Chemical mapping of a 207-nucleotide RNA with 2A3 and DMS.
RNA sequence: GGGAACGACUCGAGUAGAGUCGAAAAGGGACUGGCCCGAUGAAGCCCGGCAACCUAACUUUAUUUAAGCGUAAAGUGAAGGUGCUAAUUCCAGCAAAAUGGUGUAUUCCGGUUUGGUAGAUAAGAGAAGCGUGACAUGAGUUCGCUCAUGUCACAACACGUAUAUGUGCUUCGGCACAUAUACGUGAAAAGAAACAACAACAACAAC
Reactivity to 2A3 in 0.01 (KOAc 150mM, MgCl2 10mM, bicine 150mM(pH8.5), 24C), signal-to-noise 4, nucleotides 027 to 156: g030g010g010a020c040u040g030g000c020c010c000g040a080u090g050a020a030g020c000c000c000g000g000c020a100a110c000c000u030a020a010c000u000u010u060a070u050u160u090a140a050g130c050g030u000a010a000a000g000u030g070a130a040g000g000u010g000c000u010a020a040u090u050c010c010a020g020c110a090a030a050a090u150g020g050u060g020u100a100u100u080c030c020g020g020u040u040u070g090g010u050a080g020a160u110a180a070g050a020g050a150a030g050c050g070u010g000a000c000a000u000g000a000g030u040u110c160g020c060u000c000a000u000g000u010c000a000c000a000a000
Reactivity to DMS in 0.01 (KOAc 150mM, MgCl2 10mM, bicine 150mM(pH8.5), 24C), signal-to-noise 3, nucleotides 027 to 156: g000g000g010a080c030u000g000g000c000c010c020g000a120u000g030a150a120g030c000c010c050g000g040c000a030a040c000c010u000a130a030c010u000u000u000a030u010u000u000a130a150g020c290g030u000a010a020a030g010u000g000a070a070g020g020u000g010c020u010a060a120u000u000c000c010a080g000c080a090a040a080a110u010g000g020u010g010u000a140u010u000c020c010g020g030u000u000u020g010g010u000a050g020a090u010a050a070g000a160g000a090a090g010c160g020u000g010a010c000a010u000g000a030g000u000u010c300g010c010u000c000a010u000g000u000c000a000c000a030a070
High DMS reactivity at an A or C suggests that its Watson-Crick edge is free. The DMS profile rests on 6,345 reads.